[RMDB]
Chemical mapping of a 177-nucleotide RNA with 2A3 and DMS. For DMS, 9,963 sequencing reads were counted. Values are in units of 0.01, from 0 to 300, in steps of 10.

RNA sequence: GGGAACGACUCGAGUAGAGUCGAAAACCAACCGCCUUCGGGCGGUUGGGAUGACAGUCGCGAGGAAACUCCGGGCUGACUGUCCACGACAGAACCCGGCUUAAAUCUAUCGCUUCGGCGAUAGAAACACAUCGUGUAAAUUCGUUUACACGAUGUGAAAAGAAACAACAACAACAAC
Reactivity to 2A3 in 0.01 (KOAc 150mM, MgCl2 10mM, bicine 150mM(pH8.5), 24C), signal-to-noise 5, nucleotides 027 to 126: c000c000a000a010c000c010g040c020c020u090u100c270g130g010g000c000g000g000u000u000g000g010g000a040u110g010a010c010a000g010u020c010g030c030g070a040g040g050a160a200a150c090u010c050c030g060g130g000c060u100g030a020c000u000g000u000c000c040a080c060g150a020c020a050g070a050a070c010c000c000g030g020c090u130u150a090a160a130u070c000u010a000u000c000g000c000u030u070c210g090g000c000g000a000u000a000g010a000a060a000
Reactivity to DMS in 0.01 (KOAc 150mM, MgCl2 10mM, bicine 150mM(pH8.5), 24C), signal-to-noise 7, nucleotides 027 to 126: c000c000a000a010c000c000g010c000c000u000u010c230g030g010g030c010g010g010u000u000g000g000g000a040u010g010a050c020a010g020u000c010g010c050g010a190g010g000a120a140a110c120u010c010c150g010g000g000c040u010g020a050c010u000g000u000c000c120a100c110g010a060c060a100g000a080a110c000c010c000g010g010c160u010u000a040a150a130u000c000u000a000u000c000g010c000u000u010c210g010g000c000g000a010u000a000g000a020a060a150